[RMDB]
RNA sequence: GGGAACGACUCGAGUAGAGUCGAAAAGGAAUGCGGCUUGAGCGCACCCCCAGCCGCUCGACAAAGCGGUGCGUAUUGCCGGAACGGCUGGAAAAAUAGACGAUCAGGCUCAUUGCGGAAUGGUCCAACCACCUAUGCGAUUCGUCGCAUAGGUGGUAAAAGAAACAACAACAACAAC
Reactivity to 2A3 in 0.01 (KOAc 150mM, MgCl2 10mM, bicine 150mM(pH8.5), 24C), signal-to-noise 1, nucleotides 027 to 126: g070g010a030a050u020g020c060g050g000c030u000u040g030a010g030c050g000c020a030c000c050c000c000c010a000g010c020c010g000c000u020c010g050a050c000a030a060a020g090c020g040g050u090g020c010g000u110a060u050u240g010c020c020g070g010a000a040c000g030g000c020u010g000g000a020a110a030a000a090u100a090g060a080c000g010a010u010c010a010g020g020c010u000c010a010u010u120g100c030g010g030a120a090u110g070g050u080c060c010a000
Reactivity to DMS in 0.01 (KOAc 150mM, MgCl2 10mM, bicine 150mM(pH8.5), 24C), signal-to-noise 2, nucleotides 027 to 126: g000g010a010a050u000g020c240g040g000c030u000u010g000a020g010c020g050c080a260c090c090c060c000c010a050g010c010c010g030c010u020c020g020a040c080a020a040a300g030c040g010g000u010g010c110g040u000a080u000u000g010c000c010g030g020a030a040c010g000g010c010u000g010g010a020a060a040a040a050u010a110g020a140c010g020a060u000c020a050g010g010c000u000c010a010u000u000g000c080g020g010a080a060u020g010g000u000c060c020a150